[RMDB]
RNA sequence: GGGAACGACUCGAGUAGAGUCGAAAACCGUAGGUUGGUCUGUGAUGUUGCACUGUCAAUGACGACUUCUUCGAAAGAGGAAGUUAAGACAGACAGUGAACUACAAUGCAUGGCCAACCUAAACGGAAACUAGUUAGGGGUUCGCCCCUAACUAGAACUGACUUAGUCAGUUCGCUGACUAAGUCAGAAAAGAAACAACAACAACAAC
Reactivity to 2A3 in 0.01 (KOAc 150mM, MgCl2 10mM, bicine 150mM(pH8.5), 24C), signal-to-noise 6, nucleotides 027 to 156: c000c010g020u020a010g000g010u000u000g010g010u010c020u020g060u040g090a140u070g010u000u080g050c020a000c000u000g000u000c060a180a260u100g030a050c080g000a000c010u000u000c000u010u010c010g100a160a090a080g000a000g000g020a010a010g000u000u020a050a030g050a040c020a020g050a020c000a000g000u000g020a060a060c010u040a020c050a070a080u250g030c020a030u280g020g000c000c000a000a000c000c000u000a010a020a000c020g020g030a130a050a040c000u010a000g000u010u000a000g000g000g000g040u040u050c210g170c000c000c010c000u000a000a000c000u000a000g000a000a010
Reactivity to DMS in 0.01 (KOAc 150mM, MgCl2 10mM, bicine 150mM(pH8.5), 24C), signal-to-noise 2, nucleotides 027 to 156: c010c000g010u010a000g000g020u000u000g020g000u000c010u000g020u010g010a100u000g000u000u000g000c000a040c000u000g020u000c000a190a100u010g010a120c150g000a020c000u010u000c010u000u000c010g000a200a180a270g000a020g010g000a020a040g020u000u000a010a180g000a270c080a120g010a010c010a030g020u000g010a060a070c030u000a080c040a030a120u000g010c010a040u000g040g000c000c000a020a010c000c000u000a000a010a080c040g010g000a100a100a190c000u000a010g010u000u000a010g010g000g000g020u000u010c300g020c000c000c000c010u000a000a000c010u000a000g010a060a100